[RMDB]
Overview: The data come from the RNA Mapping Database (RMDB), library RFM100. An RNA of 177 nucleotides, treated with DMS and 2A3 and read out base by base. For 2A3, 2,419 sequencing reads were counted. The DMS profile rests on 1,905 reads. The RNA was probed in 150 mM KOAc, 10 mM MgCl2 and 150 mM bicine (pH 8.5) at 24 C.

RNA sequence: GGGAACGACUCGAGUAGAGUCGAAAAACCCAAAAACAUCAAGAAAAGCCUUUCAAUAAAUUGCUCUUCUCUUGGCGAAAGAAAGCGGGGGGCAAAAAGAAUCACGGGACUUAUGUUUCGGGAUCUCUAAGUUCAGAGUUUUCGAACUCUGAACUUAAAAAGAAACAACAACAACAAC
Reactivity to DMS in 0.01 (KOAc 150mM, MgCl2 10mM, bicine 150mM(pH8.5), 24C), signal-to-noise 2, nucleotides 027 to 126: a040c030c000c000a000a050a080a110a020c060a110u030c120a070a090g000a100a070a050a240g020c110c050u000u000u010c080a070a110u020a120a080a060u030u050g000c020u020c000u020u010c000u000c000u020u000g000g020c040g010a070a070a090g010a090a000a050g000c090g000g010g000g010g000g000c000a010a000a060a080a070g000a060a010u020c030a010c030g010g010g000a010c020u010u050a030u050g010u000u000u010c230g010g000g020a020u000c060u000c000
Reactivity to 2A3 in 0.01 (KOAc 150mM, MgCl2 10mM, bicine 150mM(pH8.5), 24C), signal-to-noise 5, nucleotides 027 to 126: a000c040c000c000a120a030a000a010a020c050a050u150c050a030a040g060a070a140a060a040g040c010c010u090u150u090c060a100a110u110a200a150a110u100u020g000c000u000c020u040u020c010u000c010u020u020g090g010c070g100a140a060a090g040a050a040a010g020c030g000g020g000g000g000g000c000a000a010a000a000a010g020a010a030u060c020a030c080g000g010g060a010c000u140u150a060u170g010u000u010u040c020g010g000g020a020u000c010u000c000